[RMDB]
RNA sequence: GGGAACGACUCGAGUAGAGUCGAAAAUACAAGCAACCAAGCCUGAUAUGCGUAAGCCACGCCUAGUGGUGUUCGUCGUCGGUGAGACGGCACGCGCCGAUCAUGUCAGCUUCAAUGGCUAUGAGCGAUACGCAUAACGUUUCGACGUUAUGCGUAUAAAAGAAACAACAACAACAAC
Reactivity to 2A3 in 0.01 (KOAc 150mM, MgCl2 10mM, bicine 150mM(pH8.5), 24C), signal-to-noise 3, nucleotides 027 to 126: u120a030c020a060a000g030c020a020a050c050c000a050a000g030c010c020u050g010a030u020a010u120g030c060g010u040a030a010g000c010c010a010c000g050c010c130u110a080g040u040g110g000u030g030u040u100c050g000u000c000g000u000c010g010g140u260g020a060g010a010c000g000g000c000a000c040g010c000g000c020c010g030a040u040c010a020u070g040u060c020a030g000c010u080u060c050a060a190u120g060g000c010u100a090u140g070a040g050c020g020
Reactivity to DMS in 0.01 (KOAc 150mM, MgCl2 10mM, bicine 150mM(pH8.5), 24C), signal-to-noise 5, nucleotides 027 to 126: u020a110c120a080a110g010c060a070a120c130c100a100a090g000c090c050u000g000a030u000a010u010g000c030g000u010a130a150g010c010c030a090c040g000c130c080u020a080g010u000g010g000u000g010u010u000c150g010u010c030g020u000c010g000g030u030g030a210g000a040c000g000g000c000a060c120g010c060g020c010c050g000a060u000c050a050u000g010u000c060a050g000c030u010u000c120a100a080u010g000g010c020u010a060u000g000a150g000c080g010

Source information: Chemical mapping of a 177-nucleotide RNA with 2A3 and DMS. Conditions: 150 mM KOAc, 10 mM MgCl2 and 150 mM bicine (pH 8.5), 24 C. The 2A3 profile rests on 5,069 reads.